Chemical mapping of a 177-nucleotide RNA with 2A3 and DMS. The data come from the RNA Mapping Database (RMDB), libraries RFM100 and RFMREP. The reactions ran in a buffer of 150 mM KOAc, 10 mM MgCl2 and 150 mM bicine (pH 8.5), at 24 C.
RNA sequence: GGGAACGACUCGAGUAGAGUCGAAAAGUACUGAAAUUACCGCGUUUUCGAGGUUUUUCGUCGUGUCAACUUGCGAAGGGAAUUACGGGUUCUUGAUGAGCAUUGGUGAUAGGAGGUGUGGGCUUGGCCAAUCUGGCUUUUUCGAAAGCCAGAUUGGAAAAGAAACAACAACAACAAC
Reactivity to 2A3 in 0.01 (KOAc 150mM, MgCl2 10mM, bicine 150mM(pH8.5), 24C), signal-to-noise 4, nucleotides 027 to 126: g060u040a030c040u040g040a030a070a050u160u080a050c000c010g020c060g050u000u010u060u120c090g020a090g020g060u040u020u010u000u050c010g030u020c010g020u010g030u080c030a030a060c070u020u080g030c020g050a040a070g080g000g050a040a080u110u040a080c080g080g090g000u070u050c010u060u060g030a070u020g010a030g010c040a090u060u110g020g030u050g010a080u070a080g040g040a040g000g010u090g020u010g040g020g000c020u040u060g010g000
Reactivity to DMS in 0.01 (KOAc 150mM, MgCl2 10mM, bicine 150mM(pH8.5), 24C), signal-to-noise 3, nucleotides 027 to 126: g000u010a080c080u030g010a070a050a080u010u010a040c050c010g000c070g010u020u020u020u020c030g030a100g020g010u030u010u000u010u010c050g010u000c060g020u010g000u030c050a030a100c090u010u020g010c070g010a150a170g000g020g000a090a030u020u020a090c070g000g000g000u010u010c050u000u000g010a080u030g010a080g010c090a020u030u020g010g010u020g000a080u010a090g000g000a070g020g000u010g030u030g010g010g000c030u000u010g010g000